[RMDB]
This 177-nucleotide RNA was probed chemically with 2A3 and DMS. For 2A3 the reverse transcriptase was SuperScript II with manganese. The DMS profile rests on 1,272 reads. The 2A3 profile rests on 2,686 reads. It was measured as part of the RMDB library TTRDEL.

RNA sequence: GGGAACGACUCGAGUAGAGUCGAAAAGAUAUGGACACAGGGAGCUGGGUGUCGGAAACGACAUGCAGCGAAGAACUGUCGUCCUAAGUCAAACAUCUUCUCAUGCCUUCGGGCAUGAGAAGAUGAAGACACAAAGCAUCUUCGGAUGCUUUGUGUCAAAAGAAACAACAACAACAAC
Reactivity to 2A3 in 0.01 (KOAc 150mM, MgCl2 10mM, bicine 150mM(pH8.5), 24C), signal-to-noise 1, nucleotides 027 to 126: g000a000u050a040u080g030g010a000c000a000c010a010g020g000g030a090g030c000u010g030g220g000u020g020u020c010g010g000a070a020a000c000g000a010c030a070u190g160c010a090g000c000g030a070a000g000a010a010c020u030g010u070c110g000u000c030c000u010a130a030g040u010c050a080a110a000c010a000u000c000u010u000c000u000c000a000u000g000c000c000u130u110c300g120g010g000c020a000u000g000a000g010a000a000g000a000u000g000a000a000
Reactivity to DMS in 0.01 (KOAc 150mM, MgCl2 10mM, bicine 150mM(pH8.5), 24C), signal-to-noise 1, nucleotides 027 to 126: g000a040u000a300u010g000g000a010c000a040c010a020g000g040g000a080g040c020u000g010g010g050u010g000u000c000g010g000a090a070a170c000g020a010c040a000u000g000c000a000g000c000g020a020a120g000a140a180c000u000g000u000c140g000u000c000c000u010a020a070g010u000c070a080a090a220c020a010u000c000u000u010c000u000c000a020u000g000c000c010u000u000c150g030g000g030c000a000u000g000a020g000a020a000g000a000u000g010a080a140